[RMDB]
RNA sequence: GGGAACGACUCGAGUAGAGUCGAAAAGGGUUAAGUCCCGCAACGAGCGCAACCCACGUAUUUAGUUGCUAACGGUUCGGCCGAGCACUCUAAAUAGACUGCCUUCGUAAGGAGGAGGAAGGUGUGGCUAAAUCCGGUAGUUCGCUACCGGAUUUAGAAAAGAAACAACAACAACAAC
Reactivity to DMS in 0.01 (KOAc 150mM, MgCl2 10mM, bicine 150mM(pH8.5), 24C), signal-to-noise 3, nucleotides 027 to 126: g020g020g020u000u010a140a140g020u000c010c000c030g030c220a060a080c030g000a050g000c090g000c100a070a100c030c000c010a060c060g020u010a000u000u000u000a000g000u000u000g000c000u000a100a060c000g010g010u000u000c220g020g000c000c000g000a060g010c000a010c130u010c010u010a000a020a000u000a020g000a030c010u000g000c000c000u010u000c000g000u030a130a160g010g010a010g000g000a010g000g000a040a020g000g010u000g010u020g000g010
Reactivity to 2A3 in 0.01 (KOAc 150mM, MgCl2 10mM, bicine 150mM(pH8.5), 24C), signal-to-noise 2, nucleotides 027 to 126: g100g000g000u080u050a120a040g300u090c050c020c000g010c010a040a060c070g060a020g100c080g000c070a070a060c000c010c000a000c010g020u000a000u000u010u000a010g000u000u020g020c010u020a070a000c000g010g030u040u070c180g050g000c000c000g000a000g000c000a020c000u130c000u000a010a010a000u020a010g040a020c030u060g000c010c010u000u020c000g040u030a080a110g000g010a010g010g020a000g000g000a030a000g010g020u090g020u090g110g000